[RMDB]
RNA sequence: GGGAACGACUCGAGUAGAGUCGAAAAGAUUAUGUGGGAGAUGCGCCCAGUCGUGUCACUGGAAACAGAAUUGCGAGUCGCUCGCACUAGCGAUAUUGAUGUGUACUGUAGCGUACACUGUGCUACUUUAAGGUAUUAUGACGAUACCACGUCAAAAGAGGCAUAUCGAUUUCGAUCGAUAUGCCUCAAAAGAAACAACAACAACAAC
Reactivity to 2A3 in 0.01 (KOAc 150mM, MgCl2 10mM, bicine 150mM(pH8.5), 24C), signal-to-noise 1, nucleotides 027 to 156: g010a010u100u170a080u000g080u010g090g000g000a090g000a030u020g020c000g100c030c070c000a070g060u020c040g000u000g120u070c000a000c010u000g000g000a090a160a000c060a150g180a050a270u080u110g000c010g000a000g030u090c020g000c020u040c030g050c000a010c050u040a010g040c010g070a030u070a080u060u260g080a120u080g040u020g000u000a000c000u090g090u300a000g090c000g090u000a000c000a000c030u000g020u020g000c010u000a010c090u060u130u130a060a000g150g000u080a080u140u080a120u160g120a000c000g000a000u030a020c030c020a000c070g080u010c000a030a030a030a010